RNA sequence: GGGAACGACUCGAGUAGAGUCGAAAAUCUGAAUGUCAUCGUCCACUCAGCCACUGGAUUUAAGCAGAGUUCAAGUAAGUACUGGUUUGGGGAGGAGGGUUGCAGCGGCCGAGCCAGGGUCUCCACCGUAGUUACGUAGGUUCGCCUACGUAACUACAAAAGAAACAACAACAACAAC
Reactivity to 2A3 in 0.01 (KOAc 150mM, MgCl2 10mM, bicine 150mM(pH8.5), 24C), signal-to-noise 2, nucleotides 027 to 126: u040c040u050g060a100a040u130g040u060c020a020u050c060g060u010c010c010a040c030u050c020a030g020c020c010a040c030u040g060g040a140u010u060u130a070a030g000c020a030g030a010g050u040u090c060a080a020g040u070a120a020g020u030a130c050u040g000g060u110u120u090g030g020g020g020a100g010g040a030g000g020g000u040u100g040c020a030g000c020g050g020c020c010g010a010g000c000c030a000g030g030g000u000c020u000c010c010a050c000c060
Reactivity to DMS in 0.01 (KOAc 150mM, MgCl2 10mM, bicine 150mM(pH8.5), 24C), signal-to-noise 4, nucleotides 027 to 126: u000c060u010g030a110a090u020g000u000c050a040u010c060g000u000c030c020a060c060u000c030a080g020c030c020a090c090u010g000g000a080u000u000u000a070a100g010c070a080g010a120g010u000u010c080a070a100g000u000a050a090g010u000a050c090u000g000g000u000u000u000g010g000g010g010a100g000g010a120g000g010g000u000u000g020c070a060g010c070g010g000c050c040g010a100g000c010c040a080g010g000g000u000c030u000c030c040a060c230c130

Background:
The record gives the reactivity of an RNA of 177 nucleotides to 2A3 and DMS. Values are in units of 0.01, from 0 to 300, in steps of 10. For 2A3 the reverse transcriptase was SuperScript II with manganese. For DMS, 4,319 sequencing reads were counted. The 2A3 profile rests on 3,224 reads.